[RMDB]
Conditions: 150 mM KOAc, 10 mM MgCl2 and 150 mM bicine (pH 8.5), 24 C.
Chemical mapping of a 177-nucleotide RNA with 2A3 and DMS.
Values cover nucleotides 27 to 126.
For DMS the reverse transcriptase was MarathonRT.
Source: RMDB libraries RFM100 and RFMREP, as collected in RNAgym.

RNA sequence: GGGAACGACUCGAGUAGAGUCGAAAAUUAACGUCUGUUUUAACUGAAACGCCGCAUUCUACACUACAACGCUAAGGCGAGGAAAUGUUCAUAGUGUAAGGAGAGCGGGAACUGGAAAACGCCUCGCGAUGCUACCUCUGUUCGCAGAGGUAGCAUCAAAAGAAACAACAACAACAAC
Reactivity to 2A3 in 0.01 (KOAc 150mM, MgCl2 10mM, bicine 150mM(pH8.5), 24C), signal-to-noise 3, nucleotides 027 to 126: u070u050a060a040c070g030u020c070u120g080u030u020u000u050a100a090c030u030g070a130a070a010c040g070c000c000g000c020a060u050u100c020u030a000c000a000c020u150a040c030a180a050c050g010c030u100a130a060g060g000c040g000a020g060g110a060a060a060u220g050u080u060c080a040u050a040g010u000g000u000a100a090g020g020a060g020a020g000c010g000g000g010a080a020c010u010g090g030a000a040a000a000c030g000c000c000u010c010g000c040
Reactivity to DMS in 0.01 (KOAc 150mM, MgCl2 10mM, bicine 150mM(pH8.5), 24C), signal-to-noise 2, nucleotides 027 to 126: u040u000a080a240c080g000u000c060u000g010u000u000u000u020a100a190c120u000g000a060a080a070c140g000c040c020g030c020a150u000u000c000u000a020c010a030c000u000a030c280a070a190c060g000c080u000a110a090g010g080c000g020a030g020g010a020a090a070u050g000u010u040c110a130u000a010g010u040g000u000a120a040g000g000a010g010a070g040c080g020g000g020a020a050c070u020g000g010a090a020a100a090c080g000c000c000u000c090g000c060